[RMDB]
Overview: Structure probing data (DMS and 2A3) for a 177-nucleotide construct. Values cover nucleotides 27 to 126.
RNA sequence: GGGAACGACUCGAGUAGAGUCGAAAACGUGCUGUCACGUUCUCGGUACCCUCGAUUUCCGUCUCUUCUUGCAUGCGUAUCCAACCGCCUCGCGGCUCCGCCGACCCCCAUGGACCGCGCUGCGGCACCUUUUAACCUAUUUCGAUAGGUUAAAAGGAAAAGAAACAACAACAACAAC
Reactivity to DMS in 0.01 (KOAc 150mM, MgCl2 10mM, bicine 150mM(pH8.5), 24C), signal-to-noise 9, nucleotides 027 to 126: c040g010u010g020c190u010g010u020c030a050c030g010u000u000c020u000c030g010g000u010a100c060c050c010u000c040g000a080u010u000u010c040c040g000u010c030u000c020u000u000c030u000u000g010c080a060u010g010c040g010u010a090u000c040c060a100a200c040c020g010c020c020u000c030g010c040g010g010c110u000c020c020g000c060c070g010a300c020c010c000c010c020a170u010g000g000a070c010c010g010c020g010c060u000g000c000g010g000c130a080
Reactivity to 2A3 in 0.01 (KOAc 150mM, MgCl2 10mM, bicine 150mM(pH8.5), 24C), signal-to-noise 9, nucleotides 027 to 126: c020g020u040g040c130u220g210u300c020a010c040g020u050u020c030u020c020g030g040u090a090c010c020c000u020c020g080a090u040u040u050c040c020g030u010c010u000c000u110u020c020u030u070g040c040a080u080g020c020g040u060a100u040c030c010a020a060c010c010g000c010c010u010c010g010c000g020g010c110u010c010c000g020c010c010g090a130c000c000c000c000c010a010u030g010g010a010c000c000g000c010g000c020u030g010c000g010g000c010a050
The RNA was probed in 150 mM KOAc, 10 mM MgCl2 and 150 mM bicine (pH 8.5) at 24 C. It was measured as part of the RMDB libraries RFM100 and RFMREP.